[RMDB]
RNA sequence: GGGAACGACUCGAGUAGAGUCGAAAAGAUAUGGAUAUGCCCAAAGGCUUGGAUUUAUUAUCGGAAACGAUAAUUGUCAGCCUUGGGACAUAUCCUAAGUCAAAAGAACGUCGUUCGCGACGUUCAACACAUCACUAGGGUUCGCCCUAGUGAUGUGAAAAGAAACAACAACAACAAC
Reactivity to 2A3 in 0.01 (KOAc 150mM, MgCl2 10mM, bicine 150mM(pH8.5), 24C), signal-to-noise 2, nucleotides 027 to 126: g010a030u070a050u160g000g010a010u010a010u030g000c030c020c000a100a140a040g050g000c080u270u300g240g000a060u300u300u100a040u000u160a000u010c020g020g030a090a060a050c010g000a000u020a010a020u030u010g010u010c020a000g000c000c000u000u000g010g030g020a030c000a000u020a000u000c000c000u010a070a010g060u020c060a000a000a030a240g010a000a000c010g000u010c010g010u080u130c300g000c000g150a000c000g010u000u010c000a000a010
Reactivity to DMS in 0.01 (KOAc 150mM, MgCl2 10mM, bicine 150mM(pH8.5), 24C), signal-to-noise 4, nucleotides 027 to 126: g010a040u010a300u010g010g010a010u000a000u010g000c000c010c010a040a020a040g020g020c000u010u010g030g010a020u010u010u000a000u000u010a000u000c000g000g000a140a140a230c010g020a000u000a000a000u000u000g010u000c010a060g000c000c000u000u010g000g010g010a040c000a010u000a000u000c000c010u000a030a100g010u020c050a120a070a160a150g010a000a000c010g010u000c000g020u010u010c270g010c000g030a000c000g000u000u000c000a100a220

An RNA of 177 nucleotides, treated with 2A3 and DMS and read out base by base. For 2A3, 8,946 sequencing reads were counted. For DMS, 5,088 sequencing reads were counted. Conditions: 150 mM KOAc, 10 mM MgCl2 and 150 mM bicine (pH 8.5), 24 C.